[RMDB]
RNA sequence: GGGAACGACUCGAGUAGAGUCGAAAAUGACCGCCGACGUGAAGUAUGAGUCCGAAGUGUCCUUCGAGAAUCACGCGACGCUGAUGUUCGCCUCGAAUGAGAUGCCGGUGUUCUCACAGGAUAACCAUGCCAUUUGGCGGCGCUGGUUACUGAUUGACAUGCGACACUGAUUCGUCAGUGUCGCAUGAAAAGAAACAACAACAACAAC
Reactivity to 2A3 in 0.01 (KOAc 150mM, MgCl2 10mM, bicine 150mM(pH8.5), 24C), signal-to-noise 1, nucleotides 027 to 156: u130g050a040c000c010g030c010c000g080a100c050g010u050g060a230a010g080u070a300u160g090a030g040u020c030c010g040a140a030g050u040g030u060c000c000u000u000c000g000a000g000a030a140u190c070a050c130g020c030g000a000c030g070c170u300g130a280u230g000u060u060c000g000c000c000u000c030g000a000a040u110g030a150g020a140u050g050c000c010g020g000u090g040u080u000c050u000c000a030c000a000g060g000a030u010a160a000c000c000a020u120g010c010c000a060u150u020u300g050g000c010g000g000c000g010c010u010g060g030u090u050a100c060u120g030a070u070u070g050a050